Chemical mapping of a 177-nucleotide RNA with DMS. Source: RMDB library M2PK50, as collected in RNAgym. Values cover nucleotides 27 to 126. For DMS, 694 sequencing reads were counted. Conditions: 150 mM KOAc, 10 mM MgCl2 and 150 mM bicine (pH 8.5), 24 C.

RNA sequence: GGGAACGACUCGAGUAGAGUCGAAAAGGUCUGAUCUUCGGAUCAGACCAACUCUGAUUCCCAAUAGCUGCGUAUGUUGGCUAAGACGGAUAGGCGUUGCCACUCAGGGGGGUUUCGACCCCCCUAACUCGAUCUACCUGUUCGCAGGUAGAUCGAGAAAAGAAACAACAACAACAAC
Reactivity to DMS in 0.01 (KOAc 150mM, MgCl2 10mM, bicine 150mM(pH8.5), 24C), signal-to-noise 1, nucleotides 027 to 126: g020g000u000c000u020g000a030u000c000u000u020c160g030g010a000u000c000a000g000a010c000c000a000a030c060u000c020u010g000a280u030u000c000c000c000a110a170u000a020g030c000u030g000c000g060u010a070u020g030u000u000g010g020c020u000a010a030g000a210c230g000g000a040u000a070g000g020c060g010u000u000g000c070c010a140c300u000c080a010g000g010g020g040g000g040u000u000u010c200g000a060c000c000c000c000c000c000u000a020a010